[RMDB]
RNA sequence: GGGAACGACUCGAGUAGAGUCGAAAAGAGUAGUCAGUAAAUGGGUGUACUCGCAUGAGAAUGUGAGUAUUAUGACGUACUGACUACGGUAUGUAUCGUGACCACCCAUUUACACUAAGAUGCAUACGGUAGUGUUGGAUUUCGAUCUAACGCUACCAAAAGAAACAACAACAACAAC
Reactivity to 2A3 in 0.01 (KOAc 150mM, MgCl2 10mM, bicine 150mM(pH8.5), 24C), signal-to-noise 9, nucleotides 027 to 126: g110a010g000u010a000g000u010c030a000g000u010a010a100a150u170g050g010g000u020g000u010a000c000u000c000g000c000a010u030g040a020g070a250a020u000g000u000g000a000g020u000a010u080u200a050u090g110a080c040g000u010a000c000u000g020a010c010u010a020c000g000g000u010a010u000g010u000a020u010c060g040u080g080a060c030c000a060c020c030c010a040u100u110u150a060c080a010c030u110a150a040g010a020u020g000c010a010u020a020c020
Reactivity to DMS in 0.01 (KOAc 150mM, MgCl2 10mM, bicine 150mM(pH8.5), 24C), signal-to-noise 9, nucleotides 027 to 126: g010a130g020u000a010g000u000c020a020g010u000a000a030a020u010g010g000g010u010g010u000a000c000u000c000g010c000a010u000g000a240g010a160a010u000g010u000g010a020g000u000a010u020u030a060u060g000a120c150g000u010a010c010u000g000a030c050u000a010c010g000g010u000a000u000g010u000a020u000c020g000u010g010a110c170c100a060c000c000c000a070u010u010u020a070c060a150c190u030a080a100g000a030u010g000c040a030u000a020c090
The record gives the reactivity of an RNA of 177 nucleotides to 2A3 and DMS. For 2A3 the reverse transcriptase was SuperScript II with manganese. Reactivities are given for positions 27 through 126. The reactions ran in a buffer of 150 mM KOAc, 10 mM MgCl2 and 150 mM bicine (pH 8.5), at 24 C. For DMS the reverse transcriptase was MarathonRT.